[RMDB]
The data come from the RNA Mapping Database (RMDB), library M2PK90. Chemical mapping of a 177-nucleotide RNA with 2A3 and DMS. For DMS, 2,440 sequencing reads were counted. Conditions: 150 mM KOAc, 10 mM MgCl2 and 150 mM bicine (pH 8.5), 24 C.
RNA sequence: GGGAACGACUCGAGUAGAGUCGAAAAAUUACGGGCGGCGCAGGUGGAGCUGCGAUCCCUCCGCCCAUCGCGUGCUCUCUCGGUGGCCCAGACGCUGCAAACGGACAGGCGGGCCACCUGGAACGAACUAAACUAAUGCGUUCGCGCAUUAGUUUAGAAAAGAAACAACAACAACAAC
Reactivity to 2A3 in 0.01 (KOAc 150mM, MgCl2 10mM, bicine 150mM(pH8.5), 24C), signal-to-noise 1, nucleotides 027 to 126: a010u170u180a050c050g000g020g000c020g010g000c010g010c020a000g010g060u140g100g130a080g110c010u010g010c000g040a070u060c010c000c000u010c000c000g010c020c010c010a050u100c050g010c020g030u090g030c020u010c000u000c000u000c140g000g010u000g000g000c000c020c010a050g040a060c140g030c130u000g000c010a100a210a240c050g050g130a090c010a020g000g040c000g010g000g000c000c000a000c010c000u010g000g000a000a030c020g000a030a030
Reactivity to DMS in 0.01 (KOAc 150mM, MgCl2 10mM, bicine 150mM(pH8.5), 24C), signal-to-noise 3, nucleotides 027 to 126: a080u010u020a070c170g010g010g020c020g040g020c070g020c040a030g000g010u010g000g000a200g000c010u000g010c010g020a110u000c010c030c030u010c010c010g020c010c000c010a110u010c100g010c110g000u000g000c090u000c050u000c010u000c300g010g000u000g000g000c000c010c010a070g000a090c080g010c010u000g000c070a070a070a160c260g010g000a150c010a040g010g000c060g020g000g000c020c000a020c000c000u000g010g000a030a100c110g000a060a140